[RMDB]
RNA sequence: GGGAACGACUCGAGUAGAGUCGAAAACGUUAAACUUUCGAGUUUAACGAAAAAAACCUUUGUGUGCAGUAGCAACAGCUACUGGAUCCCAUUGGGAUCCUGUAGACAUGCUACAUGCACACUCUGGUAAAAACGACAGUGUUUCGACACUGUCGAACCGUACGCGUUACUUCGGUAACGCGUACGGAAAAGAAACAACAACAACAAC
Reactivity to 2A3 in 0.01 (KOAc 150mM, MgCl2 10mM, bicine 150mM(pH8.5), 24C), signal-to-noise 1, nucleotides 027 to 156: c040g000u010u000a020a010a020c080u060u210u240c300g020a020g040u020u000u020a020a020c010g120a160a000a000a010a000a000a000c020c000u020u010u000g010u000g030u000g000c010a000g000u010a000g010c000a010a200c090a160g020c000u000a000c000u020g000g000a000u030c000c000c080a260u260u300g000g000g000a000u000c000c010u000g000u000a000g000a100c020a080u030g000c000u000a000c020a020u050g030c000a020c000a000c000u000c000u000g000g090u080a150a050a000a000a000c000g000a000c000a020g000u000g000u080u070u220c200g130a020c000a000c010u000g000u000c000g000a050a000